[RMDB]
This 207-nucleotide RNA was probed chemically with 2A3. Conditions: 150 mM KOAc, 10 mM MgCl2 and 150 mM bicine (pH 8.5), 24 C. For 2A3 the reverse transcriptase was SuperScript II with manganese.
RNA sequence: GGGAACGACUCGAGUAGAGUCGAAAAUGCCUUUGACCUUUCAGCUGUAGUCAAAGCAGGGAAUGAGGUACUGUGGUUGGUCUUGCCUGGACCUGCCUUUGGUCAGUCAAUUGUGUUGAGGUGUAAGUCUUUAUAGAAUCACUUGGUGAGAAAAGGAAGACUAGAUGAGGUUCGCCUCAUCUAGUCUAAAAGAAACAACAACAACAAC
Reactivity to 2A3 in 0.01 (KOAc 150mM, MgCl2 10mM, bicine 150mM(pH8.5), 24C), signal-to-noise 1, nucleotides 027 to 156: u110g030c000c000u020u010u070g100a100c070c000u070u110u210c040a030g010c000u150g020u260a060g040u060c060a070a020a090g010c000a020g010g000g000a060a070u080g010a050g010g010u100a150c050u060g010u110g060g010u050u000g030g000u000c000u020u040g010c000c030u010g010g010a040c000c000u000g010c000c000u040u070u000g010g060u040c010a040g020u000c060a060a300u050u130g020u020g000u110u130g080a030g000g000u040g010u070a090a000g000u010c000u010u150u060a110u000a090g090a060a070u010c010a040c080u050u160g010g020u140g030a090g000a020a060a000a080g030g010a010